[RMDB]
This 177-nucleotide RNA was probed chemically with DMS and 2A3. The 2A3 profile rests on 3,002 reads. It was measured as part of the RMDB library M2PK50. For 2A3 the reverse transcriptase was SuperScript II with manganese.

RNA sequence: GGGAACGACUCGAGUAGAGUCGAAAAUCAUGUUUGUUCGCAAACAUGAAAAGAAAGCACGAAAAUAAAAUAAAAGCGAAGGGAACGUGCACCCACCCAUAAAAACGCACGUGUUCGCACGUGCGAAGCUGAGUACUAUGUUCGCAUAGUACUCAGCAAAAGAAACAACAACAACAAC
Reactivity to DMS in 0.01 (KOAc 150mM, MgCl2 10mM, bicine 150mM(pH8.5), 24C), signal-to-noise 1, nucleotides 027 to 126: u000c000a000u000g000u000u010u000g000u020u000c220g040c000a010a000a000c010a000u020g000a010a050a120a100g000a100a070a090g010c000a010c020g000a110a030a080a110u020a110a090a050a130u010a050a120a120a120g040c100g000a040a050g040g010g000a030a100c010g020u000g000c030a110c020c040c000a080c000c000c040a090u030a100a020a050a100a080c010g000c010a000c000g020u030g010u000u010c230g040c000a040c000g040u000g000c020g000a010a010
Reactivity to 2A3 in 0.01 (KOAc 150mM, MgCl2 10mM, bicine 150mM(pH8.5), 24C), signal-to-noise 3, nucleotides 027 to 126: u010c000a010u000g000u010u020u000g040u020u040c140g000c080a000a000a000c000a000u040g000a020a020a010a030g060a030a040a000g010c010a000c020g100a160a060a070a160u260a040a140a080a020u250a050a140a070a020g070c040g070a080a040g000g000g010a060a060c000g000u000g000c010a100c010c020c010a020c020c000c000a060u190a090a120a020a000a020c020g020c000a000c010g000u020g000u040u020c210g020c050a000c000g000u020g000c000g000a010a000